[RMDB]
This 177-nucleotide RNA was probed chemically with 2A3 and DMS. 2A3 adducts were read by reverse transcription with SuperScript II with manganese. Reactivities are given for positions 27 through 126. DMS adducts were read by reverse transcription with MarathonRT. The RNA was probed in 150 mM KOAc, 10 mM MgCl2 and 150 mM bicine (pH 8.5) at 24 C.
RNA sequence: GGGAACGACUCGAGUAGAGUCGAAAAAGCAACCAGCCUCUUGUACUCAAGAGCAACAAAACUCUUUAAUCUUGCUGCAAUAGGUGUAUCACUAAGCAAAACAGCAACACCAACAGCAUUGAGUGCGUCAGGUGCUGACGUUCGCGUCAGCACCUGAAAAAGAAACAACAACAACAAC
Reactivity to 2A3 in 0.01 (KOAc 150mM, MgCl2 10mM, bicine 150mM(pH8.5), 24C), signal-to-noise 3, nucleotides 027 to 126: a000g140c030a030a060c000c050a050g050c020c000u030c000u000u210g010u100a150c070u030c070a020a030g010a000g030c020a000a100c050a010a140a000a000c020u060c080u120u160u070a010a150u110c030u020u100g010c010u020g010c070a060a060u090a250g000g000u090g000u020a120u170c130a100c230u140a230a050g110c000a150a150a090a110c120a020g020c000a000a000c000a000c000c000a000a040c000a030g050c000a030u090u130g020a010g000u070g020c000g090
Reactivity to DMS in 0.01 (KOAc 150mM, MgCl2 10mM, bicine 150mM(pH8.5), 24C), signal-to-noise 1, nucleotides 027 to 126: a110g000c060a000a280c000c060a040g000c240c000u000c000u000u000g000u060a200c140u110c000a220a000g000a020g000c060a000a000c300a000a000a000a060c000u000c000u000u000u000a050a200u200c260u000u000g080c000u000g000c040a000a180u150a080g000g010u010g000u000a080u160c160a180c300u000a010a000g000c010a030a000a110a120c220a220g000c210a080a000c000a000c000c000a200a060c100a000g070c060a000u000u000g000a140g000u000g000c300g050